[RMDB]
RNA sequence: GGGAACGACUCGAGUAGAGUCGAAAACAUGUGUACUUCGGUACACAUGAAAUGACCGCCAUUAUUGGCUAAGGCUACACGGACGGGCGGGUCAAAUGCCGAAAAUCGUUGCGUUCGCGCAACGAAAGAUUGACUCACAGUUCGCUGUGAGUCAAUCAAAAGAAACAACAACAACAAC
Reactivity to DMS in 0.01 (KOAc 150mM, MgCl2 10mM, bicine 150mM(pH8.5), 24C), signal-to-noise 2, nucleotides 027 to 126: c010a040u010g000u000g000u000a000c000u000u020c140g010g020u000a000c010a000c000a000u000g000a020a050a140u000g040a050c070c040g050c000c000a130u000u000a160u030u010g000g020c020u000a090a040g050g020c030u000a040c200a060c110g000g000a100c040g000g040g050c000g030g000g010u000c040a060a070a040u000g090c070c050g030a100a120a120a120u000c000g000u000u030g010c000g020u000u000c280g020c000g000c000a000a010c000g000a010a040a050
Reactivity to 2A3 in 0.01 (KOAc 150mM, MgCl2 10mM, bicine 150mM(pH8.5), 24C), signal-to-noise 2, nucleotides 027 to 126: c010a020u000g000u000g010u010a000c010u030u060c170g060g010u010a010c010a000c000a000u010g010a020a010a000u090g010a000c020c020g060c020c010a110u160u160a190u200u240g000g030c020u020a130a080g140g010c000u050a040c120a030c080g130g080a050c070g030g030g100c050g020g010g000u000c020a020a050a060u180g010c040c040g020a100a020a000a030u060c010g010u010u020g010c010g020u050u020c280g000c020g010c040a000a000c000g010a000a010a000

Source: RMDB library M2PK50, as collected in RNAgym. Structure probing data (DMS and 2A3) for a 177-nucleotide construct. The reactions ran in a buffer of 150 mM KOAc, 10 mM MgCl2 and 150 mM bicine (pH 8.5), at 24 C. For 2A3 the reverse transcriptase was SuperScript II with manganese. For 2A3, 2,042 sequencing reads were counted.